[RMDB]
RNA sequence: GGGAACGACUCGAGUAGAGUCGAAAAGCUCGGUGACACCGCGUCUGCCUGGGUCCGAAAGAUUUCUUGUCGCAAAUCUACAAGACAUUGGUUAACGUGUGGGCCGCUUGAGCGGCCGCUCGGCGGGAGAUCCUAUCCGCUUCGGUGGGUGGGAUCUAAAAGAAACAACAACAACAAC
Reactivity to DMS in 0.01 (KOAc 150mM, MgCl2 10mM, bicine 150mM(pH8.5), 24C), signal-to-noise 1, nucleotides 027 to 126: g030c010u000c040g000g000u010g010a110c200a100c030c020g000c010g060u010c080u010g000c010c020u000g010g000g000u030c010c030g000a080a160a060g010a020u010u000u010c030u010u040g020u060c140g010c140a020a000a050u000c030u020a040c220a150a060g010a000c020a080u020u010g000g010u020u040a090a140c070g010u010g000u030g010g020g020c000c000g030c010u030u150g030a240g070c000g010g010c190c030g010c090u050c020g020g020c020g000g010g000
Reactivity to 2A3 in 0.01 (KOAc 150mM, MgCl2 10mM, bicine 150mM(pH8.5), 24C), signal-to-noise 2, nucleotides 027 to 126: g020c020u010c010g030g060u060g030a040c030a030c050c020g010c010g030u000c050u040g020c010c000u040g050g020g000u020c010c010g050a090a040a010g030a020u010u050u000c050u100u150g150u120c070g030c160a030a020a040u040c030u020a030c050a090a030g020a020c030a030u020u100g020g020u080u170a070a020c010g010u050g000u100g050g040g010c030c010g070c020u190u300g060a040g050c000g000g000c020c000g000c030u020c000g070g000c000g000g000g030
The record gives the reactivity of an RNA of 177 nucleotides to DMS and 2A3. The DMS profile rests on 1,424 reads. It was measured as part of the RMDB library OK1LIB. Reactivities are given for positions 27 through 126. Conditions: 150 mM KOAc, 10 mM MgCl2 and 150 mM bicine (pH 8.5), 24 C. Values are in units of 0.01, from 0 to 300, in steps of 10. 2A3 adducts were read by reverse transcription with SuperScript II with manganese.